RNA sequence: GGGAACGACUCGAGUAGAGUCGAAAAACUGGGCGCGUGCCGGCGGCAAAUGUUCACAGCAAAGGGCGGCCCAGUGCGCAGCUGGAACAUCAGCCCCAGGCGGUCGCUGCGACAGGGACGAGCCUGGGCAUAAGCGACGGUUCGCCGUCGCUUAUGCAAAAGAAACAACAACAACAAC
Reactivity to DMS in 0.01 (KOAc 150mM, MgCl2 10mM, bicine 150mM(pH8.5), 24C), signal-to-noise 3, nucleotides 027 to 126: a050c010u000g010g010g020c020g020c060g030u000g010c020c010g020g020c160g020g020c110a070a110a070u010g010u000u000c070a140c100a110g000c030a050a190a190g000g010g020c020g010g000c010c000c020a020g020u000g000c090g010c080a080g020c010u000g020g000a100a030c090a070u010c130a120g000c080c020c000c000a010g000g000c010g010g010u000c030g000c010u000g000c180g000a120c110a050g010g000g010a030c020g020a140g020c010c000u010g000g000
Reactivity to 2A3 in 0.01 (KOAc 150mM, MgCl2 10mM, bicine 150mM(pH8.5), 24C), signal-to-noise 2, nucleotides 027 to 126: a000c020u020g000g020g000c240g030c030g040u100g180c030c020g050g000c040g050g000c060a100a120a150u220g040u160u150c090a090c040a270g020c030a110a080a070g060g090g000c010g010g000c000c000c000a000g010u020g000c050g000c020a070g000c010u000g030g000a100a070c030a130u130c020a010g000c030c020c000c000a020g000g030c020g040g020u070c070g020c240u030g050c070g070a080c100a120g050g000g030a020c010g020a000g000c000c000u000g000g040

Chemical mapping of a 177-nucleotide RNA with DMS and 2A3. DMS adducts were read by reverse transcription with MarathonRT. Reactivities are rounded to 0.1 and cut off at 0 and 3. It was measured as part of the RMDB library OK2TST.